[RMDB]
RNA sequence: GGGAACGACUCGAGUAGAGUCGAAAACACUGGACAGAGGCUCGCAUCAUGCUAGACAACAUCAACAUGCCGAAUGGUCUGGUGGCUCAACUAUAUCAGCCUGAGCGCGAGAAGGUGUACACCAUGGUCACAGGACGGCGUUCGCGCCGUCCUGUGAAAAAGAAACAACAACAACAAC
Reactivity to 2A3 in 0.01 (KOAc 150mM, MgCl2 10mM, bicine 150mM(pH8.5), 24C), signal-to-noise 1, nucleotides 027 to 126: c000a000c000u000g000g000a000c000a050g300a140g000g000c000u000c080g020c000a100u120c000a000u070g040c000u030a080g000a000c110a110a000c000a160u090c000a040a120c000a170u240g040c050c110g140a180a110u180g070g010u000c000u000g080g000u000g030g000c000u000c000a000a290c000u050a000u000a120u300c090a000g000c010c040u240g140a070g000c010g000c000g000a030g000a220a000g110g000u000g000u080a000c000a080c000c000a010u020g300g000
Chemical mapping of a 177-nucleotide RNA with 2A3. Conditions: 150 mM KOAc, 10 mM MgCl2 and 150 mM bicine (pH 8.5), 24 C. It was measured as part of the RMDB library OK1LIB.